RNA sequence: GGGAACGACUCGAGUAGAGUCGAAAAGAUAUGGAUCCCAUGCCCGAUCUGUAGGGAGCUGGAGAAGUGUCGGAAACGACACGUAACAGCUUUGAUCUACAGAUCGGGCCGCUGGGAUCCUAAGUCACUCUAUUCGUAGGUUCGCCUACGAAUAGAGAAAAGAAACAACAACAACAAC
Reactivity to DMS in 0.01 (KOAc 150mM, MgCl2 10mM, bicine 150mM(pH8.5), 24C), signal-to-noise 2, nucleotides 027 to 126: g020a040u000a300u020g010g010a010u000c000c010c000a010u030g010c000c000c010g010a000u000c000u000g020u000a020g010g040g000a010g020c000u000g010g040a150g000a070a220g000u000g020u000c020g010g020a170a130a250c000g020a010c000a000c010g000u000a150a300c000a010g020c000u020u000u020g010a070u000c010u000a000c000a000g000a000u000c010g010g000g020c000c010g020c010u020g000g000g010a020u000c010c000u000a020a080g010u010c020a290
The record gives the reactivity of an RNA of 177 nucleotides to DMS. In probing experiments dimethyl sulfate is read out at A N1 and C N3, which are open when not base-paired. The reactions ran in a buffer of 150 mM KOAc, 10 mM MgCl2 and 150 mM bicine (pH 8.5), at 24 C. For DMS the reverse transcriptase was MarathonRT.